[RMDB]
Annotation: An RNA of 177 nucleotides, treated with DMS and 2A3 and read out base by base.
RNA sequence: GGGAACGACUCGAGUAGAGUCGAAAAGAGGAGAUGGUGGCUCUGCCAUCAUCCAGCCACAGAGGAAAGGUGCCUUGGGGACAGGCCAGAGCCAAGUCAGCCUGUAAAGAGCCGUGCCAGAGGGGAGGACUUGACUAUCUUUCGAGAUAGUCAAGUCAAAAGAAACAACAACAACAAC
Reactivity to DMS in 0.01 (KOAc 150mM, MgCl2 10mM, bicine 150mM(pH8.5), 24C), signal-to-noise 3, nucleotides 027 to 126: g000a140g010g000a140g010a020u000g000g030u010g000g000c010u020c150u010g000c010c000a020u000c000a040u000c000c020a080g010c050c010a090c120a120g010a110g000g020a060a070a090g000g020u000g020c050c050u010u000g000g010g010g000a050c070a040g010g010c060c040a070g000a060g010c030c070a060a140g010u000c060a140g000c000c000u000g010u010a040a070a100g000a140g000c030c020g020u000g010c030c050a080g000a070g010g000g000g020a140g000
Reactivity to 2A3 in 0.01 (KOAc 150mM, MgCl2 10mM, bicine 150mM(pH8.5), 24C), signal-to-noise 2, nucleotides 027 to 126: g060a040g040g050a110g010a050u020g000g090u030g010g050c050u060c140u300g030c010c000a020u000c020a000u000c000c000a010g020c030c020a060c040a030g110a050g060g080a120a100a000g010g030u060g040c000c000u040u060g050g000g000g020a010c040a040g030g000c020c010a030g040a000g100c020c040a030a010g100u080c020a010g020c000c010u010g060u050a080a110a020g040a010g000c000c020g010u020g050c040c030a050g010a050g020g000g030g010a050g070
The data come from the RNA Mapping Database (RMDB), library OK2TST. The RNA was probed in 150 mM KOAc, 10 mM MgCl2 and 150 mM bicine (pH 8.5) at 24 C.